Chemical mapping of a 177-nucleotide RNA with 2A3 and DMS. The DMS profile rests on 1,717 reads. Conditions: 150 mM KOAc, 10 mM MgCl2 and 150 mM bicine (pH 8.5), 24 C. Values cover nucleotides 27 to 126. DMS adducts were read by reverse transcription with MarathonRT. For 2A3, 1,577 sequencing reads were counted.
RNA sequence: GGGAACGACUCGAGUAGAGUCGAAAAUACGACAUCAUCGAUUUGAAUGCCUGUCUUCUGUGCUCGCCAUUUGGAACGUUGCUGAAUAAGCGUUAGAUAUGUGGCGACCAGACUGAAGCCCGGUCUGGAUCCAGGACUAGUUCGCUAGUCCUGGAUCAAAAGAAACAACAACAACAAC
Reactivity to 2A3 in 0.01 (KOAc 150mM, MgCl2 10mM, bicine 150mM(pH8.5), 24C), signal-to-noise 3, nucleotides 027 to 126: u140a040c020g010a010c000a060u060c010a010u020c040g150a180u100u040u210g130a110a060u030g010c010c040u010g040u050c010u040u050c010u060g110u130g030c100u000c020g000c000c000a030u130u040u060g060g050a010a000c030g070u150u050g050c130u140g090a190a170u300a140a020g000c000g000u020u040a100g040a090u140a080u210g010u000g000g000c000g000a000c000c000a010g010a010c040u090g020a040a020g030c000c020c000g000g040u010c020u030g060
Reactivity to DMS in 0.01 (KOAc 150mM, MgCl2 10mM, bicine 150mM(pH8.5), 24C), signal-to-noise 2, nucleotides 027 to 126: u010a070c030g000a040c040a050u070c130a070u020c110g040a080u000u000u030g020a170a110u000g000c170c000u000g040u010c030u040u000c030u000g010u040g000c190u010c040g000c030c000a000u000u030u040g010g010a020a120c000g000u000u010g000c080u010g090a150a100u030a050a060g000c000g010u000u020a060g000a140u040a040u000g000u000g000g000c000g000a060c050c030a010g000a060c100u040g000a100a210g020c090c040c040g000g000u030c070u020g030